The data come from the RNA Mapping Database (RMDB), library OK3TST. The record gives the reactivity of an RNA of 207 nucleotides to 2A3 and DMS. The reactions ran in a buffer of 150 mM KOAc, 10 mM MgCl2 and 150 mM bicine (pH 8.5), at 24 C.
[RMDB]
RNA sequence: GGGAACGACUCGAGUAGAGUCGAAAAGUGUGUACACACGAACGUGUGAGUACGAGUGUGAUCGAUCGUACACGUGUACUCGAGAGAUCGAACUCGUUCGAGAACUCGAGAUCGAGAGAUCUCGAUCGUGUGUACGAGAGUACGUUCGUUCUCGUUCUAGGUAAUGUUGAUUCGUCAACAUUACCUAAAAAGAAACAACAACAACAAC
Reactivity to 2A3 in 0.01 (KOAc 150mM, MgCl2 10mM, bicine 150mM(pH8.5), 24C), signal-to-noise 9, nucleotides 027 to 156: g100u110g010u020g010u070a010c010a000c000a000c030g010a080a020c080g080u110g040u080g170a090g030u050a010c010g000a010g010u090g040u130g060a080u080c030g010a020u010c010g010u050a010c080a040c130g130u150g010u120a050c040u060c080g010a010g000a000g000a010u050c060g010a040a040c010u000c030g030u020u020c020g010a010g020a100a030c020u000c010g020a020g010a050u060c020g000a010g000a010g010a080u010c000u000c010g000a020u020c000g000u010g000u000g000u010a000c000g000a010g000a000g020u080a060c050g010u020u050c020g010u020u010c030u000c070g060u170u090c030
Reactivity to DMS in 0.01 (KOAc 150mM, MgCl2 10mM, bicine 150mM(pH8.5), 24C), signal-to-noise 6, nucleotides 027 to 156: g040u010g020u000g020u000a030c010a020c020a070c000g020a030a090c090g030u000g010u010g020a080g010u010a070c020g020a040g030u000g020u010g020a100u000c010g010a300u000c030g020u000a030c010a100c160g010u010g030u000a050c020u000c010g020a070g010a280g000a100u000c050g010a070a070c090u000c060g010u000u000c010g000a150g000a080a080c030u000c000g010a040g010a020u000c010g010a300g000a300g010a030u000c000u010c000g000a030u000c010g010u000g010u000g010u000a020c000g000a090g000a160g010u000a080c090g000u010u000c090g010u000u000c090u000c010g000u000u000c020